[RMDB]
RNA sequence: GGGAACGACUCGAGUAGAGUCGAAAAGGUGGUCUCGGGUUCGAGUCUCGCUUUCGAUCCCUCGAUCUGCCACGUCUGUUCGAAGAGUAGUCUUCGUGGCAACUGGCAGUUAAACCGUGUAGUACCGAUGGAGGUUGGAAACAAUGCACAUCACUACCAUACUGAAAUCGUUCGCGAUUUCAGUAUGAAAAGAAACAACAACAACAAC
Reactivity to 2A3 in 0.01 (KOAc 150mM, MgCl2 10mM, bicine 150mM(pH8.5), 24C), signal-to-noise 5, nucleotides 027 to 156: g030g010u030g000g020u010c030u020c020g180g060g050u210u300c020g030a020g020u000c090u080c100g050c030u040u080u030c050g090a080u040c000c010c000u020c030g050a080u010c000u000g000c010c010a060c150g020u040c140u050g000u040u030c010g000a010a000g010a050g100u300a100g100u050c010u010u000c010g040u080g030g010c010a010a000c020u010g000g000c010a000g000u020u150a090a070a020c050c010g030u010g000u080a040g010u030a130c080c140g010a010u000g020g050a140g060g030u010u010g030g020a040a050a020c040a020a060u130g060c050a050c000a040u030c010a000c020u010a010c000
Reactivity to DMS in 0.01 (KOAc 150mM, MgCl2 10mM, bicine 150mM(pH8.5), 24C), signal-to-noise 1, nucleotides 027 to 156: g040g030u000g040g010u000c010u000c040g020g010g030u000u010c010g010a080g010u010c040u000c080g000c080u000u000u010c050g010a070u000c010c010c010u010c040g020a040u000c010u000g000c000c000a040c240g030u000c060u000g000u000u000c030g020a030a050g010a020g010u000a140g010u000c020u000u000c010g020u000g020g020c000a030a050c000u000g030g080c000a030g010u000u000a040a120a070c040c030g050u030g030u000a060g030u000a080c080c000g030a120u000g020g000a110g040g010u010u020g050g010a150a100a120c060a110a180u000g070c080a070c040a080u010c030a100c040u010a130c060